An RNA of 177 nucleotides, treated with 2A3 and read out base by base. Conditions: 150 mM KOAc, 10 mM MgCl2 and 150 mM bicine (pH 8.5), 24 C.

[RMDB]
RNA sequence: GGGAACGACUCGAGUAGAGUCGAAAAGAGCGUCUGACGGUCUGUCUCUGGCGGUCCCGCGUCGGGUCGUGGAUCCGUGUCGGCAGCCGCGCUCCGUGUGGACGAUCGGGGCGUCCUCGGGCUCAUAGGUCGCUCGUGGAUUCGUCCACGAGCGACCAAAAGAAACAACAACAACAAC
Reactivity to 2A3 in 0.01 (KOAc 150mM, MgCl2 10mM, bicine 150mM(pH8.5), 24C), signal-to-noise 1, nucleotides 027 to 126: g000a010g000c030g060u060c120u070g060a000c000g030g020u020c000u100g000u030c000u000c000u150g100g000c000g080g070u110c100c020c240g050c000g000u250c100g000g010g040u000c100g130u230g140g000a090u200c160c000g000u000g160u300c120g030g000c050a000g010c000c000g000c000g000c070u000c010c000g030u000g010u160g090g070a050c000g000a030u040c120g050g000g000g000c050g000u080c000c000u010c000g000g090g020c030u030c070a000u130a110